[RMDB]
RNA sequence: GGGAACGACUCGAGUAGAGUCGAAAAGGUCCGCUGUUCGCAGCGGACCAAAUAAAAUCAGCGGUAUCGAGGCGAAAAAUAUUACCGCUGAACGCCUCGAUAAAACCGUGCCGUUCGCGGCACGGAAGGAAUACAGUCUCUUCGGAGACUGUAUUCCAAAAGAAACAACAACAACAAC
Reactivity to 2A3 in 0.01 (KOAc 150mM, MgCl2 10mM, bicine 150mM(pH8.5), 24C), signal-to-noise 1, nucleotides 027 to 126: g000g000u000c030c010g000c000u010g040u060u050c300g000c100a010g000c000g000g000a020c030c000a000a000a000u000a010a000a000a010u060c020a000g030c020g100g050u040a020u070c020g010a020g060g020c020g140a040a000a000a210a030u280a100u170u130a050c040c040g000c040u040g000a020a020c010g010c010c010u030c010g020a030u100a030a110a020a020c000c000g000u000g000c030c010g020u070u000c250g000c000g120g000c000a000c000g000g000a010a010